[RMDB]
RNA sequence: GGGAACGACUCGAGUAGAGUCGAAAAGGGUGUUACGGUUCCUGACGGGAACGUUCGUAUAGUACGAGAGGAACUACGAAUGGGUGCCACUGGUGUACCGGCUGUUCGAAAGAGCACGUGCCGGGCACGCAUCCACCCGUUUCGACGGGUGGAUGCGAAAAGAAACAACAACAACAAC
Reactivity to 2A3 in 0.01 (KOAc 150mM, MgCl2 10mM, bicine 150mM(pH8.5), 24C), signal-to-noise 2, nucleotides 027 to 126: g060g000g000u020g070u120u120a070c080g000g020u040u090c000c000u120g060a080c050g000g030g020a070a090c020g000u010u000c000g000u030a010u000a040g000u010a030c010g010a000g020a040g080g010a020a010c000u000a000c020g000a010a020u020g040g070g010u060g020c030c040a090c020u030g030g070u060g030u110a300c000c000g010g000c010u000g000u000u010c010g010a070a050a080g010a000g010c000a020c130g070u060g060c000c000g030g020g000c010a020
Reactivity to DMS in 0.01 (KOAc 150mM, MgCl2 10mM, bicine 150mM(pH8.5), 24C), signal-to-noise 2, nucleotides 027 to 126: g000g000g000u050g010u010u000a060c170g030g010u000u000c000c000u000g040a160c080g010g010g020a090a110c070g000u000u000c000g040u010a020u000a040g000u040a100c040g000a180g010a140g000g000a100a130c080u000a010c000g010a000a040u000g000g000g000u000g000c070c040a080c000u010g020g020u000g040u000a110c010c000g000g000c060u020g010u000u000c000g000a070a080a090g020a020g000c000a080c300g030u050g040c000c000g020g000g000c060a070
Overview: This 177-nucleotide RNA was probed chemically with 2A3 and DMS. Reactivities are given for positions 27 through 126. Source: RMDB library RFM100, as collected in RNAgym.